[RMDB]
RNA sequence: GGGAACGACUCGAGUAGAGUCGAAAACUCUUGUUAGGUGAAAGUUGAUGGUCGCCGUGUCAGUCCACGCCUUUGAAAACAGUUCUAUGUAGUAGGGAGUCGAGAACCUAUGAGAGUUAGAACUUGCUAUGCCUUGGACUCUUCGGAGUCCAAGGAACCGAUUAUGUAAGUUCGCUUACAUAAUCGGAAAAGAAACAACAACAACAAC
Reactivity to DMS in 0.01 (KOAc 150mM, MgCl2 10mM, bicine 150mM(pH8.5), 24C), signal-to-noise 3, nucleotides 027 to 156: c020u000c030u000u020g030u000u000a040g020g040u000g000a070a080a150g000u000u010g010a090u000g020g000u000c040g010c060c010g010u000g020u000c050a100g020u000c030c030a070c040g010c040c010u000u000u000g000a090a090a090a060c040a070g020u000u000c030u000a060u010g020u010a280g020u000a060g000g010g000a170g000u010c140g000a260g020a110a110c000c010u000a040u000g000a200g000a170g040u000u000a030g000a050a050c020u010u000g010c030u000a090u000g020c000c010u010u000g000g010a020c000u000c000u000u000c300g020g000a050g040u000c000c000a020a000g000g010a010a030
Reactivity to 2A3 in 0.01 (KOAc 150mM, MgCl2 10mM, bicine 150mM(pH8.5), 24C), signal-to-noise 2, nucleotides 027 to 156: c020u020c000u030u090g070u070u150a070g030g030u050g070a140a090a070g040u090u080g000a060u050g020g040u020c030g020c070c020g060u030g050u010c020a010g050u030c010c020a020c070g020c000c020u050u090u100g140a100a100a040a040c070a030g000u010u010c010u020a020u100g040u030a040g020u000a000g000g020g080a050g020u050c040g020a030g030a210a050c010c000u000a020u030g040a070g010a020g080u020u020a020g000a020a010c020u010u030g010c010u090a070u150g020c000c000u010u000g000g000a010c000u000c000u020u070c190g060g000a000g000u000c000c000a000a000g000g000a000a000